[RMDB]
RNA sequence: GGGAACGACUCGAGUAGAGUCGAAAAUGGAGAAGCAGGGUACGUGCAAAAUGCACACCGGUUGGUCGAGCUAAUUAACAAGCUCUGACGACCAUGGUGAUCGAAUGCACGUGCUCCCCUUCUCCACCUUGGCCUGGAGCUUCGGCUCCAGGCCAAGAAAAGAAACAACAACAACAAC
Reactivity to 2A3 in 0.01 (KOAc 150mM, MgCl2 10mM, bicine 150mM(pH8.5), 24C), signal-to-noise 1, nucleotides 027 to 126: u040g000g000a000g010a000a010g000c090a040g020g000g000u000a000c000g000u000g030c000a000a000a000a180u140g110c070a000c070a000c030c000g050g050u000u010g160g030u000c000g020a000g030c000u010a140a270u230u150a140a080c010a040a020g000c030u010c120u100g010a000c000g030a040c020c000a040u290g000g000u050g000a170u040c000g060a070a000u030g000c000a000c000g050u000g000c000u000c000c000c000c000u000u000c000u030c000c000a000c000
Background: Structure probing data (2A3) for a 177-nucleotide construct. Source: RMDB library RFM100, as collected in RNAgym. The RNA was probed in 150 mM KOAc, 10 mM MgCl2 and 150 mM bicine (pH 8.5) at 24 C. For 2A3 the reverse transcriptase was SuperScript II with manganese.